[RMDB]
RNA sequence: GGGAACGACUCGAGUAGAGUCGAAAAGAUAUGGAGUGUGAACUACUGCCUAAGAGUGGCGUUGAAACUAGUAGAAUCGGAAACGAUUCUACUAGUGGAGCCAUGGUAGGCAGCACACUCCUAAGUCCUAUACUUUGUUCUUCGGAACAAAGUAUAGAAAAGAAACAACAACAACAAC
Reactivity to DMS in 0.01 (KOAc 150mM, MgCl2 10mM, bicine 150mM(pH8.5), 24C), signal-to-noise 4, nucleotides 027 to 126: g010a070u010a230u000g000g020a020g020u000g010u000g000a090a030c080u020a300c000u000g000c010c000u000a060a120g020a250g070u000g000g010c000g020u000u010g000a220a140a030c000u000a000g010u000a000g000a010a000u000c000g000g010a100a080a170c010g020a010u000u000c000u000a000c000u000a000g010u000g010g010a090g020c000c000a010u000g010g030u000a010g000g010c000a000g000c000a010c000a000c000u000c000c000u000a000a040g000u000c060
Reactivity to 2A3 in 0.01 (KOAc 150mM, MgCl2 10mM, bicine 150mM(pH8.5), 24C), signal-to-noise 4, nucleotides 027 to 126: g080a030u140a070u260g000g010a020g010u040g050u040g010a080a030c100u300a040c010u300g020c010c010u110a170a030g300a090g290u000g010g010c010g090u180u150g040a050a030a000c000u000a000g000u000a010g000a020a000u000c010g020g000a090a080a030c000g000a000u000u020c000u000a000c000u000a000g000u000g000g010a010g000c000c000a010u020g050g120u030a010g000g030c000a000g030c000a000c000a000c000u000c000c000u000a010a000g000u000c000
This 177-nucleotide RNA was probed chemically with DMS and 2A3. Values are in units of 0.01, from 0 to 300, in steps of 10. The RNA was probed in 150 mM KOAc, 10 mM MgCl2 and 150 mM bicine (pH 8.5) at 24 C.